[RMDB]
RNA sequence: GGGAACGACUCGAGUAGAGUCGAAAAUCAACUACAUCUCCACCAUCCCCAGGAGCAUCAUCGAGAGCUCGCUCAUCGACGGGGCCGACCACUUCCAGAUCUUCACGCGGCUCAUCGUGCCGCUCUCUAGCAAACUGAUUUUCGAAUCAGUUUGCUAAAAAGAAACAACAACAACAAC
Reactivity to DMS in 0.01 (KOAc 150mM, MgCl2 10mM, bicine 150mM(pH8.5), 24C), signal-to-noise 3, nucleotides 027 to 126: u000c060a070a100c090u010a070c080a060u000c020u010c020c020a080c070c060a130u010c040c020c020c090a090g000g000a070g020c080a090u000c050a110u010c120g000a080g000a070g010c050u000c140g040c020u000c060a090u020c040g030a080c080g000g000g000g010c030c020g000a090c050c050a070c040u000u010c040c030a080g000a040u000c050u000u000c080a090c230g010c020g010g040c010u010c070a070u000c080g000u010g000c030c020g000c020u000c000u000c030
Reactivity to 2A3 in 0.01 (KOAc 150mM, MgCl2 10mM, bicine 150mM(pH8.5), 24C), signal-to-noise 2, nucleotides 027 to 126: u030c000a040a030c020u190a060c060a080u060c030u020c040c030a030c030c010a070u090c000c010c000c030a020g040g020a040g020c020a050u080c020a000u060c040g040a030g000a020g180c000u010c090g000c030u050c020a140u090c040g080a060c080g000g020g010g040c000c030g010a040c040c010a010c040u060u040c000c010a060g060a240u050c010u080u150c070a080c170g050c000g000g020c000u010c020a130u090c010g050u010g000c010c020g020c000u030c010u050c000

Source information:
An RNA of 177 nucleotides, treated with DMS and 2A3 and read out base by base. The DMS profile rests on 2,153 reads. For 2A3, 1,750 sequencing reads were counted. For 2A3 the reverse transcriptase was SuperScript II with manganese.